[RMDB]
Chemical mapping of a 177-nucleotide RNA with 2A3 and DMS.
The 2A3 profile rests on 66,558 reads.
The reactions ran in a buffer of 150 mM KOAc, 10 mM MgCl2 and 150 mM bicine (pH 8.5), at 24 C.
The data come from the RNA Mapping Database (RMDB), library TTRDES.
For DMS, 18,012 sequencing reads were counted.
RNA sequence: GGGAACGACUCGAGUAGAGUCGAAAAGAUAUGGAUGUCGUAGGGAGCUCUGUAUCGGAAACGAUACGGAGCAUCGAUCUACACAUCCUAAGUCAAAACACACAUCCAUCUUCGGAUGGAUGUGUGACCUAAUUACCAAGUUCGCUUGGUAAUUAGGAAAAGAAACAACAACAACAAC
Reactivity to 2A3 in 0.01 (KOAc 150mM, MgCl2 10mM, bicine 150mM(pH8.5), 24C), signal-to-noise 6, nucleotides 027 to 126: g010a000u020a010u070g000g000a000u010g020u110c220g000u060a000g020g020g070a100g000c000u000c010u010g010u000a000u000c000g000g000a020a010a010c010g000a000u000a000c020g010g000a000g010c010a000u030c010g000a020u000c000u010a010c000a000c000a010u000c000c000u010a020a000g010u000c020a030a010a190a120c010a000c000a000c000a000u000c010c000a010u000c010u050u110c300g250g000a000u000g000g000a000u010g000u000g000u000g000a000
Reactivity to DMS in 0.01 (KOAc 150mM, MgCl2 10mM, bicine 150mM(pH8.5), 24C), signal-to-noise 6, nucleotides 027 to 126: g010a020u000a080u010g000g000a000u000g010u000c300g020u000a000g000g010g000a050g020c000u000c000u010g010u000a000u010c000g010g000a020a030a050c000g010a010u000a000c010g000g000a020g010c000a020u000c190g000a070u010c000u000a010c010a020c000a010u000c000c000u000a000a060g000u000c010a110a080a130a240c010a010c000a010c000a000u000c000c000a000u000c000u000u010c250g020g010a020u000g000g000a000u000g010u000g010u000g000a050